The record gives the reactivity of an RNA of 207 nucleotides to 2A3. For 2A3 the reverse transcriptase was SuperScript II with manganese. Source: RMDB library OK3TST, as collected in RNAgym. The 2A3 profile rests on 902 reads. Conditions: 150 mM KOAc, 10 mM MgCl2 and 150 mM bicine (pH 8.5), 24 C.

RNA sequence: GGGAACGACUCGAGUAGAGUCGAAAAGUGUCAUUAACCUCAACAACGUUCUUCAUGACAGGCCUACUGCGGAGCGGCGUCUCGCCAAUACCAUCACCCAAAGUGGCCGCGCUGAUGUUCGCGUUGGUGCGGUCGUUAUGGGUUGUCGGUCGGCAAAGGAUGGACCAUGAUUCGUCAUGGUCCAUCCAAAAGAAACAACAACAACAAC
Reactivity to 2A3 in 0.01 (KOAc 150mM, MgCl2 10mM, bicine 150mM(pH8.5), 24C), signal-to-noise 2, nucleotides 027 to 156: g080u040g000u050c000a010u050u140a130a170c000c100u060c040a070a080c110a100a090c130g050u070u000c000u070u060c110a020u070g030a010c050a030g030g020c000c010u090a090c020u190g100c060g130g000a040g000c050g000g060c060g060u030c000u010c070g030c030c000a020a050u130a180c030c000a040u100c030a010c010c020c020a000a090a000g030u020g000g040c030c000g000c000g000c000u000g010a010u010g090u160u090c240g020c000g130u010u010g000g000u000g000c000g000g000u000c000g000u030u020a050u090g000g000g000u030u020g000u000c030g000g050u010c010g010g000c020a120a060a000